Source: RMDB library OK2TST, as collected in RNAgym. This 177-nucleotide RNA was probed chemically with 2A3 and DMS. The 2A3 profile rests on 4,728 reads. Conditions: 150 mM KOAc, 10 mM MgCl2 and 150 mM bicine (pH 8.5), 24 C. For DMS the reverse transcriptase was MarathonRT. 2A3 adducts were read by reverse transcription with SuperScript II with manganese.
[RMDB]
RNA sequence: GGGAACGACUCGAGUAGAGUCGAAAAGGAUCACCGGCCUUCCCCUGGCCCGGAGCCAGAACCUGCCGGACGAGGUGGCCCACCAGGACAAGUGGUCGGAGCUCGCCCACGGGAUACGCCAGGUGGCUGUAUGCAUUACGUUCGCGUAAUGCAUACAAAAAGAAACAACAACAACAAC
Reactivity to 2A3 in 0.01 (KOAc 150mM, MgCl2 10mM, bicine 150mM(pH8.5), 24C), signal-to-noise 3, nucleotides 027 to 126: g030g010a130u060c040a020c060c000g000g000c000c010u020u030c000c010c000c000u010g000g020c040c090c010g160g030a060g020c020c010a040g020a100a070c010c000u080g060c040c050g030g010a030c040g050a070g040g040u090g020g000c020c000c000a010c000c000a030g060g020a070c050a180a060g110u010g030g020u040c070g020g010a090g030c050u120c030g030c000c010c000a000c020g030g010g000a080u090a130c020g010c010c030a060g040g030u050g030g040c020
Reactivity to DMS in 0.01 (KOAc 150mM, MgCl2 10mM, bicine 150mM(pH8.5), 24C), signal-to-noise 6, nucleotides 027 to 126: g010g010a110u000c050a060c030c020g020g000c020c090u000u000c030c030c010c040u000g010g000c040c050c110g010g010a140g020c000c020a090g000a150a130c150c020u000g020c090c050g010g000a050c050g010a070g000g020u000g020g010c050c000c030a100c040c030a060g000g010a130c180a140a160g010u000g010g010u000c060g020g000a170g000c090u000c020g000c040c010c020a170c080g000g000g010a090u010a060c200g020c020c010a100g030g020u000g000g010c110